[RMDB]
RNA sequence: GGGAACGACUCGAGUAGAGUCGAAAAGAUAUGGAGCGAUUGUCAGAUAAUGUCUGUUCAAUGACGUGGUCUCGGAAACGAGACCAUAAGACAGAACAGAUAUUAUCUUGGAUUUAUCGCUCCUAAGUCAAAAUAGUAAUAGUUCGCUAUUACUAAACAUGGUGGGAUACUUCGGUAUCCCACCAUGAAAAGAAACAACAACAACAAC
Reactivity to 2A3 in 0.01 (KOAc 150mM, MgCl2 10mM, bicine 150mM(pH8.5), 24C), signal-to-noise 2, nucleotides 027 to 156: g040a010u030a030u110g000g000a000g000c000g000a000u000u020g010u000c000a000g000a030u000a000a010u000g010u030c000u000g020u020u000c120a290a240u100g020a030c080g000u000g040g000u000c000u000c010g000g100a090a070a050c020g000a000g000a000c000c000a010u000a010a000g020a050c030a000g050a000a000c000a000g010a000u000a000u000u000a000u000c000u000u030g010g000a000u260u150u070a040u020c000g000c000u000c000c000u000a000a000g010u000c020a000a010a000a190u050a000g030u000a000a000u050a000g050u200u230c300g000c140u160a000u160u150a000c000u000a020a090a000

The data come from the RNA Mapping Database (RMDB), library RNAMAK. An RNA of 207 nucleotides, treated with 2A3 and read out base by base. 2A3 is a SHAPE reagent: it acylates the 2'-hydroxyl of flexible nucleotides of all four kinds. Values cover nucleotides 27 to 156.